[RMDB]
RNA sequence: GGGAACGACUCGAGUAGAGUCGAAAACCCCUCUUUGGGGCCCCAGCUUCAGUGAAGACAAGGGGUUUCGGCCUUUUGAACGCACUGAUGCCCUGACGCUGCUUCAUUACGGAGCUGUGUCCGGGGCUAAUAGUUGAUGGUUCGCCAUCAACUAUUAAAAAGAAACAACAACAACAAC
Reactivity to 2A3 in 0.01 (KOAc 150mM, MgCl2 10mM, bicine 150mM(pH8.5), 24C), signal-to-noise 9, nucleotides 027 to 126: c000c000c030c010u040c070u080u130u110g010g000g010g020c010c000c000c000a040g040c020u040u010c000a010g000u000g030a060a020g020a040c010a010a020g020g000g000g000u010u010u030c150g100g010c000c000u050u020u010u010g030a050a010c020g010c030a000c000u010g000a030u050g040c010c010c010u020g000a000c000g000c010u030g000c000u020u000c020a200u120u300a100c230g000g000a000g000c010u020g010u000g010u000c060c120g010g000g000g000c000
Reactivity to DMS in 0.01 (KOAc 150mM, MgCl2 10mM, bicine 150mM(pH8.5), 24C), signal-to-noise 9, nucleotides 027 to 126: c030c000c010c180u000c180u010u010u000g010g020g000g010c080c000c010c010a180g010c060u010u000c000a010g010u000g010a020a010g000a300c010a010a010g000g010g000g010u000u000u030c130g020g000c000c000u000u010u000u000g000a030a290c300g000c010a010c000u010g010a020u010g000c000c050c090u000g010a020c010g010c010u000g000c000u000u000c000a170u030u040a160c190g000g000a010g000c000u000g000u010g000u000c020c140g010g000g010g020c030
An RNA of 177 nucleotides, treated with 2A3 and DMS and read out base by base. Conditions: 150 mM KOAc, 10 mM MgCl2 and 150 mM bicine (pH 8.5), 24 C. Values cover nucleotides 27 to 126. For DMS the reverse transcriptase was MarathonRT.